Chemical mapping of a 207-nucleotide RNA with 2A3. The RNA was probed in 150 mM KOAc, 10 mM MgCl2 and 150 mM bicine (pH 8.5) at 24 C. Source: RMDB library RNAMAK, as collected in RNAgym.
RNA sequence: GGGAACGACUCGAGUAGAGUCGAAAAUACCACCUUCGGGUGGUAAAUAAAGGGGUCUUCGAUGAGUAAGAGCGAGGAUCUAUACUGAAGCCUCCACGGUAUAGGGAGCUCUACGAGAAGACGGAGGCACCCACCAGUGCGCAGUUCGCUGCGCAAAGAAUCGCAAGGAAUUCGUUCCUUGCGAUUCAAAAGAAACAACAACAACAAC
Reactivity to 2A3 in 0.01 (KOAc 150mM, MgCl2 10mM, bicine 150mM(pH8.5), 24C), signal-to-noise 2, nucleotides 027 to 156: u040a010c000c010a020c010c030u020u070c220g080g010g000u000g000g000u010a030a010a000u050a000a060a000g050g000g000g010u000c000u010u000c040g100a170u210g050a080g210u130a300a060g020a000g000c010g020a300g010g000a000u000c000u000a000u010a000c000u000g060a110a040g000c000c010u010c020c000a010c000g000g000u000a000u000a010g000g000g000a000g000c000u000c010u010a050c020g040a050g000a090a010g030a010c010g000g000a010g000g000c010a050c020c000c000a020c020c030a070g060u040g050c020g000c000a000g010u040u070c090g080c140u000g020c010g040c000a000a010a000